[RMDB]
RNA sequence: GGGAACGACUCGAGUAGAGUCGAAAAUAUUUAUGCUGCUGUGAGACUAAAUUAGUAAGAAAAGGCUUUUGAGGGGCUUGUAACCAAAAGGUGAUCUUGCUUUUUAGAAGUGUCAGUCUGAGGGCCCCCUCCUAAGUUAUUUCGAUAACUUAGGAGGAAAAGAAACAACAACAACAAC
Reactivity to 2A3 in 0.01 (KOAc 150mM, MgCl2 10mM, bicine 150mM(pH8.5), 24C), signal-to-noise 1, nucleotides 027 to 126: u040a010u060u110u040a090u110g010c010u020g000c000u020g040u020g100a000g020a060c020u060a040a100a150u190u030a050g000u030a030a000g060a030a100a020a010g010g030c000u010u050u000u100g070a150g020g020g040g020c110u080u170g020u130a060a050c040c000a140a130a000a000g100g040u030g000a050u030c000u010u010g040c000u040u020u050u010u070a010g010a180a030g010u020g070u140c000a010g030u000c000u060g010a080g050g000g040c000c000c090
Reactivity to DMS in 0.01 (KOAc 150mM, MgCl2 10mM, bicine 150mM(pH8.5), 24C), signal-to-noise 3, nucleotides 027 to 126: u010a070u020u000u010a050u010g000c020u000g010c040u000g030u010g020a130g020a180c030u000a040a040a060u010u000a040g020u000a030a040g000a040a070a120a170g000g000c020u000u000u010u000g000a130g010g020g020g030c080u000u010g000u000a090a120c030c010a030a040a050a040g000g010u000g010a190u000c030u010u000g010c020u010u000u000u000u000a040g010a090a100g010u000g010u000c030a030g000u000c070u000g000a110g000g000g000c020c030c060